RNA sequence: GGGAACGACUCGAGUAGAGUCGAAAACAGCAACAAGGAACCGAUUCCCACCAAGUUCGGAAAGAGAUACCGGGCGAGGCGCUGAAGAAAGAAUCUCGCUUCAGACACCCCAAGGACUCGACUGAAGAAUGCACGCCAUCGUUCGCGAUGGCGUGAACGUAAACAAGUUCUUCGGAACUUGUUUACGAAAAGAAACAACAACAACAAC
Reactivity to 2A3 in 0.01 (KOAc 150mM, MgCl2 10mM, bicine 150mM(pH8.5), 24C), signal-to-noise 3, nucleotides 027 to 156: c030a020g130c020a020a130c000a070a220g110g030a140a030c060c050g060a080u020u020c000c010c000a030c060c040a120a020g050u030u020c010g000g020a120a090a020g020a020g010a030u050a080c010c050g020g010g020c060g040a080g080g060c180g000c040u080g020a020a010g030a040a230a030g060a130a140u110c110u100c180g030c000u040u010c000a040g050a120c010a070c030c010c010c040a000a120g020g000a040c040u030c050g060a060c010u050g010a020a020g050a090a050u100g070c010a000c000g000c000c000a000u000c000g060u090u060c230g010c010g080a010u010g000g000c000g010u010g000a000a000
Reactivity to DMS in 0.01 (KOAc 150mM, MgCl2 10mM, bicine 150mM(pH8.5), 24C), signal-to-noise 1, nucleotides 027 to 156: c040a300g060c020a100a040c060a300a060g000g020a200a300c010c040g060a100u000u000c020c040c050a110c000c000a220a230g000u010u000c000g070g040a080a050a130g010a050g000a200u000a170c000c080g000g020g010c050g000a060g020g000c000g020c000u010g000a040a120g010a090a110a070g020a160a100u010c060u000c060g010c000u000u060c000a050g000a300c000a090c000c020c040c010a090a110g020g000a090c000u000c010g000a220c050u000g000a100a070g020a050a060u000g000c040a040c020g090c000c000a010u000c000g060u000u000c260g050c020g050a010u000g010g110c010g000u000g000a000a050
Conditions: 150 mM KOAc, 10 mM MgCl2 and 150 mM bicine (pH 8.5), 24 C. This 207-nucleotide RNA was probed chemically with 2A3 and DMS. DMS adducts were read by reverse transcription with MarathonRT. For 2A3 the reverse transcriptase was SuperScript II with manganese. The data come from the RNA Mapping Database (RMDB), library M2RFPK.